Structure probing data (2A3) for a 207-nucleotide construct. As a SHAPE reagent, 2A3 marks flexible, mostly unpaired nucleotides at the ribose 2'-OH. 2A3 adducts were read by reverse transcription with SuperScript II with manganese. Source: RMDB library RNAMAK, as collected in RNAgym.
[RMDB]
RNA sequence: GGGAACGACUCGAGUAGAGUCGAAAAUACUGUUCGCAGUACAAGAAGCGUACUACAUGCCUAUUACGAAGAACUAGGCUCCCCACCGCUUUCCCAAAUAGGAAAGCGAGGCCUAGGGAGUAACGGCAUGUAUCGCCUGAAGCCGAUUCGUCGGCAACUGGCCCGAUAAAUUCGUUUAUCGGGCCAGAAAAGAAACAACAACAACAAC
Reactivity to 2A3 in 0.01 (KOAc 150mM, MgCl2 10mM, bicine 150mM(pH8.5), 24C), signal-to-noise 1, nucleotides 027 to 156: u160a020c120u110g010u030u020c170g000c080a070g000u130a130c100a160a200g150a170a030g030c040g110u110a160c030u000a000c000a000u000g000c050c020u230a150u300u030a060c080g020a250a060g000a100a040c070u000a000g030g010c010u210c070c000c040c020a030c080c000g000c030u000u050u000c070c040c090a230a250a170u260a080g000g000a000a000a000g010c000g030a000g000g020c000c020u000a000g000g000g000a100g000u000a010a010c060g020g000c000a010u000g000u000a040u160c000g000c000c010u080g040a070a000g020c000c000g000a000u020u090c250g000u030c010g150g010c000a000a000
For 2A3, 503 sequencing reads were counted.